[RMDB]
RNA sequence: GGGAACGACUCGAGUAGAGUCGAAAAGCGACAGCAUUUUUCUAGACGAAACCGCUUCGUUUAGAUUUGCAGUUGUCGAUUGCCGUAUUCCUCUACGGCACUGUGUGCAUCAGACGAAAGCGGUAGAGGGUAGGAACGACUUCGGUCGUUCCUACCCAAAAGAAACAACAACAACAAC
Reactivity to 2A3 in 0.01 (KOAc 150mM, MgCl2 10mM, bicine 150mM(pH8.5), 24C), signal-to-noise 1, nucleotides 027 to 126: g040c020g000a070c070a040g000c030a140u090u000u000u000u000c010u020a010g020a040c000g000a020a030a000c040c060g010c110u040u060c000g040u010u000u000a070g000a040u010u040u090g070c060a070g000u140u050g030u030c040g060a040u000u150g000c000c000g040u010a060u080u180c040c050u000c000u030a020c020g020g120c000a000c020u080g040u070g010u170g090c030a110u020c010a040g020a060c020g100a090a050a040g000c000g070g060u060a130g040a060